RNA sequence: GGGAACGACUCGAGUAGAGUCGAAAAGAUUUACGAGAGUAAAUCGCAUUUGGAAACAAAUGUAAGUCGGAAUUACGACGCUAACGACCUACAUUGGUAUCGAACCCAAUGUAGAUAAGUGCUAGUAGAUGGCAGACUACUAGACACAUGCGUUGAAGUCGUAUCCACCUUUCGAGGUGGAUACGACAAAAGAAACAACAACAACAAC
Reactivity to 2A3 in 0.01 (KOAc 150mM, MgCl2 10mM, bicine 150mM(pH8.5), 24C), signal-to-noise 1, nucleotides 027 to 156: g010a000u010u010u010a000c020g020a000g000a000g090u000a000a000a000u010c030g000c000a000u000u000u000g020g030a010a020a000c020a000a000a000u030g010u070a030a060g010u010c010g010g080a010a020u140u110a140c030g000a020c000g010c010u030a080a000c000g020a010c000c000u000a000c000a010u000u000g020g010u120a060u300c150g050a050a050c020c010c000a000a000u000g010u000a000g000a000u090a080a030g000u030g000c000u000a000g010u000a000g010a120u070g090g040c040a020g020a060c000u010a000c000u010a000g190a010c000a000c010a030u100g000c030g000u000u000g080a120a020